[RMDB]
RNA sequence: GGGAACGACUCGAGUAGAGUCGAAAAACGUCAUCGCUUACGAGCGAUGACGAAGGAGUUGCUCUCAAGACUUAUUUUUGACAAGGAGAGACGGACAAUGGAGCCUGAGGCGUACGCGCCUCAGGCAGAAUGCCGGAACUUUCGAGUUCCGGCAUUCAAAAGAAACAACAACAACAAC
Reactivity to 2A3 in 0.01 (KOAc 150mM, MgCl2 10mM, bicine 150mM(pH8.5), 24C), signal-to-noise 2, nucleotides 027 to 126: a000c000g130u040c000a030u000c000g000c040u000u050a010c150g160a020g000c000g000a000u000g050a000c000g000a010a010g150g080a160g060u040u070g050c000u000c000u000c100a290a230g070a140c020u140u120a120u290u200u060u110u100g090a040c130a090a000g170g050a000g000a000g000a080c120g120g000a010c100a130a300u230g150g110a070g000c010c010u000g000a000g010g000c040g040u130a010c180g000c000g000c130c000u000c000a000g000g000c000a000
Reactivity to DMS in 0.01 (KOAc 150mM, MgCl2 10mM, bicine 150mM(pH8.5), 24C), signal-to-noise 1, nucleotides 027 to 126: a110c000g030u000c000a010u000c020g070c000u010u000a090c300g000a010g000c000g010a010u000g000a000c000g050a010a030g010g020a060g000u000u000g020c050u000c000u000c000a090a100g010a190c040u070u050a060u000u050u040u070u050g030a010c050a240a140g000g000a050g020a040g000a130c120g000g040a000c180a050a140u040g060g000a020g050c040c000u000g080a000g020g100c000g060u000a190c260g000c050g000c000c000u070c010a000g000g000c030a000
Source information:
Chemical mapping of a 177-nucleotide RNA with 2A3 and DMS. Reactivities are given for positions 27 through 126. DMS adducts were read by reverse transcription with MarathonRT. The data come from the RNA Mapping Database (RMDB), library RFM100.